[RMDB]
RNA sequence: GGGAACGACUCGAGUAGAGUCGAAAAGGGCCUAGUCUUAUAUAAAACUUUUGUGUGGCAAUUACUAAAAACACAAGAUCUUAAUUACUGUAGCACAACAAUUAUCCUACUCAUUGUAUCUUAUAAGAAGGAUUGUGAUAGCAAUGUUGCCAGGUUAGAUGUGCAGGAUAUUCGUAUCCUGCACAUCAAAAGAAACAACAACAACAAC
Reactivity to DMS in 0.01 (KOAc 150mM, MgCl2 10mM, bicine 150mM(pH8.5), 24C), signal-to-noise 1, nucleotides 027 to 156: g020g000g030c020c010u000a140g030u010c070u000u030a160u000a110u000a050a090a100a050c020u000u010u000u000g040u000g010u000g010g040c060a030a110u000u000a180c130u040a050a090a100a080a060c060a060c020a040a040g000a080u000c020u000u000a050a120u010u000a030c030u000g000u010a060g040c080a010c050a080a070c050a060a080u000u000a100u000c030c000u000a050c050u000c060a090u000u010g010u000a090u000c050u010u030a100u010a030a090g010a190a060g000g000a060u000u010g030u010g000a060u000a050g000c010a030a150u000g000u000u000g000c000c030a110g010g000u010u010a110
Reactivity to 2A3 in 0.01 (KOAc 150mM, MgCl2 10mM, bicine 150mM(pH8.5), 24C), signal-to-noise 2, nucleotides 027 to 156: g020g040g000c020c010u010a000g010u000c040u170u120a120u030a010u060a050a210a080a120c080u080u130u140u050g090u020g010u010g010g040c020a040a040u150u030a120c080u090a020a060a100a110a050c010a000c030a030a010g030a080u080c010u010u120a110a120u080u120a210c010u080g010u030a000g050c080a000c020a100a060c050a090a040u210u100a010u060c010c000u020a080c010u020c060a050u080u050g040u040a080u020c060u020u190a110u040a300a100g060a030a030g010g010a010u010u070g030u010g080a000u010a040g000c000a050a070u040g020u090u020g020c040c080a040g080g040u100u060a060

Record summary: An RNA of 207 nucleotides, treated with DMS and 2A3 and read out base by base.